[RMDB]
RNA sequence: GGGAACGACUCGAGUAGAGUCGAAAACCUCACUACAUUUUACUGUUCCUAAAGAAUUUGUGACAGGUACAGUAAAACGUAUUGCAAGGUUUAUCAGUUCCUAUAAACAGGUAAAUAACAAUAUUUGAAAAGCAAAGACUGUUCGCAGUCUUUGCAACCAUUAACAGUCCUUCGGGACUGUUAAUGGAAAAGAAACAACAACAACAAC
Reactivity to 2A3 in 0.01 (KOAc 150mM, MgCl2 10mM, bicine 150mM(pH8.5), 24C), signal-to-noise 7, nucleotides 027 to 156: c000c000u000c000a010c010u010a000c000a030u000u000u010u000a000c000u000g010u040u090c010c000u060a110a160a050g150a260a300u200u290u280g160u110g050a060c090a080g000g000u010a000c000a000g000u000a000a000a000a000c010g000u000a000u010u010g010c060a080a040g010g030u010u010u020a140u120c020a020g010u000u020c010c020u040a080u190a110a100a020c060a020g110g050u100a080a080a090u210a160a040c050a070a080u090a170u180u100u100g060a090a090a020a010g000c000a000a000a000g000a000c000u010g030u050u070c160g010c110a000g000u000c000u000u010u010g000c000a000a000
Reactivity to DMS in 0.01 (KOAc 150mM, MgCl2 10mM, bicine 150mM(pH8.5), 24C), signal-to-noise 1, nucleotides 027 to 156: c000c010u000c010a050c010u010a010c000a070u010u000u000u000a000c030u010g000u000u010c010c000u010a100a160a240g020a120a140u000u010u000g000u000g000a110c300a060g000g000u000a010c010a010g000u000a000a000a000a000c010g010u000a010u000u000g010c050a090a030g040g060u000u000u000a100u020c080a200g010u010u010c000c030u000a130u010a040a090a110c060a100g050g010u010a070a070a060u000a100a100c050a040a090u000a070u000u010u000g000a100a070a110a230g010c000a030a010a020g000a000c000u010g000u000u000c230g080c010a050g020u000c000u000u000u000g010c000a060a040
Chemical mapping of a 207-nucleotide RNA with 2A3 and DMS. The data come from the RNA Mapping Database (RMDB), library M2RFOK. 2A3 adducts were read by reverse transcription with SuperScript II with manganese.